[RMDB]
RNA sequence: GGGAACGACUCGAGUAGAGUCGAAAAGAUAUGGACAUGGAACUACACGGAUGGAGCCUAUAAUCUCGGAAACGAGGUAGGCUCCUGACGUGCCAUGUCCUAAGUCAAACCGCACUUCGGUGCGGAAGUGCUAAAGUUUCUUCGGAAACUUUAGCACAAAAGAAACAACAACAACAAC
Reactivity to 2A3 in 0.01 (KOAc 150mM, MgCl2 10mM, bicine 150mM(pH8.5), 24C), signal-to-noise 1, nucleotides 027 to 126: g020a040u060a040u160g020g000a000c010a010u010g040g000a090a120c120u240a060c230a010c000g000g010a020u130g000g000a010g010c000c000u060a080u070a240a300u250c010u030c010g060g010a140a080a040c010g020a000g000g000u000a010g030g000c020u000c010c000u000g000a000c000g020u020g010c000c030a000u010g020u040c000c000u000a010a000g000u010c000a000a010a120c000c010g050c010a010c000u060u090c230g190g030u020g040c000g010g010a010a070
Reactivity to DMS in 0.01 (KOAc 150mM, MgCl2 10mM, bicine 150mM(pH8.5), 24C), signal-to-noise 1, nucleotides 027 to 126: g000a000u000a300u010g010g000a020c000a000u000g000g010a050a100c110u010a300c040a040c050g030g000a210u000g000g020a060g010c060c000u000a040u000a290a030u000c000u000c010g010g020a080a070a300c000g000a020g010g010u000a000g000g000c010u000c000c000u000g000a180c020g000u000g060c030c010a000u000g000u000c000c000u000a000a010g040u000c000a120a110a160c020c000g070c000a000c000u000u000c230g050g000u000g000c000g000g010a010a040
This 177-nucleotide RNA was probed chemically with 2A3 and DMS. For 2A3 the reverse transcriptase was SuperScript II with manganese. 2A3 is a SHAPE reagent: it acylates the 2'-hydroxyl of flexible nucleotides of all four kinds. For 2A3, 1,718 sequencing reads were counted.